[RMDB]
RNA sequence: GGGAACGACUCGAGUAGAGUCGAAAACGAGGGGUGGGCGAAAGUUGCCAUGAGACCGUAACUUUCGUAGUCAUUGAUAAAGGGGCAGGUCUCGCUCUUUUGUCAUUGCGGUUGCCUGGAGGCAUGGAAAACCAUGACAGGUUCGCCUGUCAUGGAACACUAUGGACUUCUUCGGAAGUCCAUAGUGAAAAGAAACAACAACAACAAC
Reactivity to 2A3 in 0.01 (KOAc 150mM, MgCl2 10mM, bicine 150mM(pH8.5), 24C), signal-to-noise 3, nucleotides 027 to 156: c070g020a060g030g010g010g090u200g020g020g000c020g000a020a000a010g000u010u010g020c030c030a090u140g070a070g020a090c030c030g000u010a010a000c000u000u020u010c020g000u010a020g050u050c030a040u010u060g020a030u060a030a010a010g000g000g000g000c020a030g040g200u090c070u040c100g000c010u000c000u030u030u010u020g020u030c010a030u020u050g020c040g030g000u050u050g030c020c030u060g050g020a060g040g000c040a030u090g060g010a060a070a010a050c000c000a000u000g000a000c000a000g030g000u040u040c110g090c050c000u000g000u000c000a010u010g000g010a000a010
Reactivity to DMS in 0.01 (KOAc 150mM, MgCl2 10mM, bicine 150mM(pH8.5), 24C), signal-to-noise 2, nucleotides 027 to 156: c090g000a120g020g000g010g030u000g010g020g060c030g010a030a030a040g000u000u000g020c000c000a200u020g000a200g000a060c090c110g030u000a050a050c040u000u000u000c020g010u000a160g010u000c060a110u010u000g000a050u010a040a010a020g010g000g020g030c000a120g020g010u000c120u000c060g010c030u000c010u010u000u000u000g030u000c030a070u010u000g030c040g020g020u000u010g020c000c020u010g020g030a100g010g060c030a050u000g000g000a060a070a080a180c010c000a000u000g010a040c010a030g010g000u000u000c300g030c010c000u000g000u000c000a000u010g000g010a040a070

An RNA of 207 nucleotides, treated with 2A3 and DMS and read out base by base. The reactions ran in a buffer of 150 mM KOAc, 10 mM MgCl2 and 150 mM bicine (pH 8.5), at 24 C. The DMS profile rests on 4,455 reads. 2A3 adducts were read by reverse transcription with SuperScript II with manganese. For DMS the reverse transcriptase was MarathonRT.